The data come from the RNA Mapping Database (RMDB), library OK2TST. Chemical mapping of a 177-nucleotide RNA with DMS and 2A3. The 2A3 profile rests on 3,069 reads. The DMS profile rests on 3,108 reads. The RNA was probed in 150 mM KOAc, 10 mM MgCl2 and 150 mM bicine (pH 8.5) at 24 C.
RNA sequence: GGGAACGACUCGAGUAGAGUCGAAAACGGUUGCUCCUGUUGCUUGGGUAACUGUAUCUAAACCUUUAUCAACUUCUGCAAAAGCUUUUCCUGAUGCUGCUGCAAUACCUAAAACAGGUGCAGUUACCAUUCGUCCUACAUUCGUGUAGGACGAAUGAAAAGAAACAACAACAACAAC
Reactivity to DMS in 0.01 (KOAc 150mM, MgCl2 10mM, bicine 150mM(pH8.5), 24C), signal-to-noise 4, nucleotides 027 to 126: c060g000g000u000u000g000c020u010c080c090u010g010u010u000g030c100u010u000g010g000g000u010a020a030c030u000g010u000a020u000c030u000a090a070a160c120c070u000u000u000a090u010c080a070a090c100u010u000c090u000g000c030a030a050a300a030g000c030u000u010u000u010c070c060u000g010a090u000g010c020u000g010c280u000g000c030a070a060u000a090c050c020u000a040a010a060a150c200a000g010g040u000g010c010a020g010u000u000a030c070
Reactivity to 2A3 in 0.01 (KOAc 150mM, MgCl2 10mM, bicine 150mM(pH8.5), 24C), signal-to-noise 3, nucleotides 027 to 126: c030g010g010u030u010g020c020u050c050c020u050g020u110u110g070c110u030u130g050g020g000u010a030a020c010u010g010u020a020u040c050u070a040a130a170c040c020u100u200u110a200u140c050a070a150c030u140u100c040u090g040c020a050a040a020a050g040c060u100u130u100u000c020c000u060g020a060u100g010c010u000g050c030u020g000c010a030a040u100a130c010c030u110a090a000a070a090c080a020g000g000u020g000c000a000g010u010u040a020c010